[RMDB]
RNA sequence: GGGAACGACUCGAGUAGAGUCGAAAAGCUUAAUAACCUCCGCUGAGCCCUUCUCCCCCAGCUUGCCUGUGUCCUAGGGAAUUGGAAGGUCAUCCUUCACAGGAUCGUGUGGAAGUCCUGCUCGGGGUCCAAACAUGGUAAUUCGUUACCAUGUUAACCUAGAACGUAGUUUCGACUACGUUCUAGGAAAAGAAACAACAACAACAAC
Reactivity to 2A3 in 0.01 (KOAc 150mM, MgCl2 10mM, bicine 150mM(pH8.5), 24C), signal-to-noise 2, nucleotides 027 to 156: g020c030u110u080a080a010u170a170a190c030c030u070c030c020g030c020u030g080a090g030c050c020c020u080u060c140u070c000c000c020c000c000a000g000c060u060u060g020c000c000u060g010u010g020u110c000c050u060a030g010g040g030a040a060u100u070g040g030a030a020g050g000u020c030a020u080c020c000u020u060c010a000c000a070g010g000a020u060c030g060u040g000u030g070g040a050a080g010u040c020c000u010g000c010u020c010g020g000g000g000u000c040c050a060a000a000c000a000u000g000g000u030a020a000u020u070c140g060u070u000a000c000c000a000u000g010u010u000a000a020
Reactivity to DMS in 0.01 (KOAc 150mM, MgCl2 10mM, bicine 150mM(pH8.5), 24C), signal-to-noise 1, nucleotides 027 to 156: g010c050u000u000a060a130u000a070a090c040c000u000c000c000g050c030u010g000a160g040c020c010c040u020u000c050u000c030c000c000c040c060a070g000c010u000u000g030c040c010u010g040u000g010u020c060c020u000a160g010g050g020a140a110u020u010g000g010a060a080g010g020u000c070a110u000c010c020u000u000c070a120c060a050g000g010a060u000c040g020u020g090u000g010g000a140a080g010u000c010c010u000g010c020u000c080g060g000g020g000u000c060c020a070a030a000c000a010u000g000g020u000a010a050u000u000c270g020u010u000a020c000c000a000u000g020u000u000a020a080
Conditions: 150 mM KOAc, 10 mM MgCl2 and 150 mM bicine (pH 8.5), 24 C. The record gives the reactivity of an RNA of 207 nucleotides to 2A3 and DMS. It was measured as part of the RMDB library M2RFPK. DMS adducts were read by reverse transcription with MarathonRT. The 2A3 profile rests on 1,514 reads.